[RMDB]
The data come from the RNA Mapping Database (RMDB), library RFM100. An RNA of 177 nucleotides, treated with 2A3 and read out base by base. The RNA was probed in 150 mM KOAc, 10 mM MgCl2 and 150 mM bicine (pH 8.5) at 24 C.
RNA sequence: GGGAACGACUCGAGUAGAGUCGAAAAAGCAGCCGGUACGCCGGCUGCAUUAAUGAUGUAUUCCUCAGCUCACACCGACCACGAUGACGACAAAAAACUUUGUUCCUUAUUUUUAUUGUCUGACAAAGUCCAUACACGCUUUCGAGCGUGUAUGGACAAAAGAAACAACAACAACAAC
Reactivity to 2A3 in 0.01 (KOAc 150mM, MgCl2 10mM, bicine 150mM(pH8.5), 24C), signal-to-noise 2, nucleotides 027 to 126: a000g000c000a000g000c010c020g000g030u100a080c300g000c020c000g070g130c000u000g000c010a000u000u000a000a080u150g240a060u060g070u150a140u000u070c000c010u060c000a040g000c000u020c010a070c020a010c010c000g090a040c000c020a070c060g060a010u110g030a080c000g080a020c000a000a000a000a000a060a100c180u230u030u220g030u020u000c010c000u000u000a050u080u060u000u000u050a200u150u150g000u000c050u030g000a080c090a090a120a020